[RMDB]
RNA sequence: GGGAACGACUCGAGUAGAGUCGAAAACACAGUGUUACAGCAGUAAUGCAUCCGCAUUCUCGUGCCUGCGUCACGCUGUUGGUUGUGACUAUUUGUACAACCCAUAUGCGUUCGACAUACAACAAUGAUGAGAUAACAGGUUCGCCUGUUAUCUCAUAAAAGAAACAACAACAACAAC
Reactivity to 2A3 in 0.01 (KOAc 150mM, MgCl2 10mM, bicine 150mM(pH8.5), 24C), signal-to-noise 8, nucleotides 027 to 126: c040a000c000a030g030u050g050u280u180a070c040a070g080c010a020g020u240a050a030u040g020c010a070u130c140c150g000c020a020u040u000c030u030c030g060u040g020c010c020u070g020c040g020u020c000a000c000g020c000u000g020u020u020g020g000u010u020g020u030g120a140c030u120a230u300u150u300g030u020a010c000a000a010c010c000c010a020u050a040u210g010c010g000u040u110c040g020a010c020a060u210a030c050a080a010c020a060a080u190g040
Reactivity to DMS in 0.01 (KOAc 150mM, MgCl2 10mM, bicine 150mM(pH8.5), 24C), signal-to-noise 7, nucleotides 027 to 126: c070a170c060a040g000u010g010u010u010a030c060a120g020c130a040g000u010a030a040u000g010c010a120u010c190c260g000c010a030u000u000c050u010c050g010u000g000c040c030u000g010c140g000u000c060a050c020g020c010u000g010u000u000g010g010u000u000g010u000g000a060c070u010a170u000u000u010g010u000a020c020a010a010c010c000c070a050u000a020u020g010c010g010u000u010c140g020a030c050a130u010a090c160a050a080c160a070a120u010g010
The record gives the reactivity of an RNA of 177 nucleotides to 2A3 and DMS. Source: RMDB library OK2TST, as collected in RNAgym. The RNA was probed in 150 mM KOAc, 10 mM MgCl2 and 150 mM bicine (pH 8.5) at 24 C. 2A3 adducts were read by reverse transcription with SuperScript II with manganese. For 2A3, 9,924 sequencing reads were counted. For DMS, 8,763 sequencing reads were counted.